[RMDB]
The record gives the reactivity of an RNA of 177 nucleotides to 2A3 and DMS.
The data come from the RNA Mapping Database (RMDB), library OK2TRN.
DMS adducts were read by reverse transcription with MarathonRT.
RNA sequence: GGGAACGACUCGAGUAGAGUCGAAAACAGUCAACGUGAAGGCGGGCCAGACCAUCGCCGCAUUCUACCAGAGCACCGUCAUGAUCUUUGGCACGAUGGCUCGCUACAUACUUAGAGUUAGGGAAAACACCUAUGGAUGCUUCGGCAUCCAUAGGUGAAAAGAAACAACAACAACAAC
Reactivity to 2A3 in 0.01 (KOAc 150mM, MgCl2 10mM, bicine 150mM(pH8.5), 24C), signal-to-noise 1, nucleotides 027 to 126: c050a000g090u010c060a060a050c110g050u040g100a190a030g120g000c060g010g010g040c010c020a020g000a060c010c000a050u080c090g020c000c010g080c000a010u110u080c040u110a060c000c040a000g010a030g020c070a020c140c000g130u180c010a070u110g070a050u010c020u020u080u070g020g040c060a030c030g110a080u110g000g000c000u020c000g000c010u060a110c000a060u170a020c000u000u060a020g010a000g090u060u070a040g000g050g060a070a000a000a000
Reactivity to DMS in 0.01 (KOAc 150mM, MgCl2 10mM, bicine 150mM(pH8.5), 24C), signal-to-noise 2, nucleotides 027 to 126: c070a150g000u000c030a100a170c180g000u000g000a100a130g000g000c010g000g010g000c050c040a100g000a060c120c050a020u000c090g030c030c010g000c090a130u000u000c080u000a080c080c030a070g000a020g000c150a000c070c020g000u000c110a110u010g000a050u000c050u000u000u020g020g000c010a030c130g020a100u000g000g000c050u000c040g020c020u000a040c140a110u010a020c060u000u010a160g000a080g010u000u010a040g010g000g000a040a050a070a240
Conditions: 150 mM KOAc, 10 mM MgCl2 and 150 mM bicine (pH 8.5), 24 C.